[RMDB]
RNA sequence: GGGAACGACUCGAGUAGAGUCGAAAAUGAGGUGCCUACAACGUGUUUUUGAGUGGGCCUGUGUCUCUGUGUGCGCCGUGUGCGGAUAGCUUGCUAUGCGUGUGUGGUUGUGUGUGGAUUGAUGUGGACGUACCUUACAGUUCGCUGUAAGGUACGUAAAAGAAACAACAACAACAAC
Reactivity to 2A3 in 0.01 (KOAc 150mM, MgCl2 10mM, bicine 150mM(pH8.5), 24C), signal-to-noise 2, nucleotides 027 to 126: u200g070a070g020g080u150g050c000c000u030a020c010a050a020c060g070u030g000u020u030u030u070u040g080a040g000u070g010g040g000c030c000u000g020u010g010u000c000u000c020u060g030u010g000u010g020c000g010c000c000g020u030g000u030g010c010g040g070a010u010a010g000c040u010u020g000c020u040a020u100g080c010g010u030g000u010g020u030g030g020u040u110g020u020g010u020g000u020g040g000a090u040u160g050a060u050g010u090g080g000
Reactivity to DMS in 0.01 (KOAc 150mM, MgCl2 10mM, bicine 150mM(pH8.5), 24C), signal-to-noise 2, nucleotides 027 to 126: u010g000a120g000g010u010g010c010c020u000a030c040a120a170c160g000u010g000u000u000u000u000u000g020a190g020u000g000g010g030c020c050u000g030u010g010u010c030u000c030u000g020u000g020u000g020c040g040c030c010g040u010g020u000g010c030g000g000a070u000a060g020c030u000u010g000c040u000a020u000g020c020g050u010g000u020g040u000g010g010u010u010g050u010g000u000g000u010g000g020a170u000u010g000a070u000g030u000g010g000

Conditions: 150 mM KOAc, 10 mM MgCl2 and 150 mM bicine (pH 8.5), 24 C. This 177-nucleotide RNA was probed chemically with 2A3 and DMS. For 2A3 the reverse transcriptase was SuperScript II with manganese. For 2A3, 1,997 sequencing reads were counted. For DMS, 2,407 sequencing reads were counted.